[RMDB]
Overview
The data come from the RNA Mapping Database (RMDB), library TTRINS. Structure probing data (DMS) for a 177-nucleotide construct. Reactivities are given for positions 27 through 126.

RNA sequence: GGGAACGACUCGAGUAGAGUCGAAAAGAUAUGGAGCAUUAACCAAAAUGCCCACGACAUGCUCAUGAGAUCGGAAACGAUCUGAUCGAGCAACAGCGUGUGGCAUUUUGGUUAAUGCUCCUAAGUCCACUAGCUUACUCUUCGGAGUAAGCUAGUGAAAAGAAACAACAACAACAAC
Reactivity to DMS in 0.01 (KOAc 150mM, MgCl2 10mM, bicine 150mM(pH8.5), 24C), signal-to-noise 2, nucleotides 027 to 126: g000a110u000a300u000g020g010a010g010c000a000u000u000a000a010c010c000a000a000a000a000u000g000c000c000c010a020c010g030a060c060a250u000g000c010u010c000a020u010g010a020g000a020u000c000g020g000a090a110a250c010g020a010u000c010u010g020a010u000c260g010a000g030c010a040a070c260a100g000c000g020u000g010u000g050g030c010a010u000u010u000u000g000g000u000u000a000a000u000g000c000u000c000c000u000a010a080g000u000c030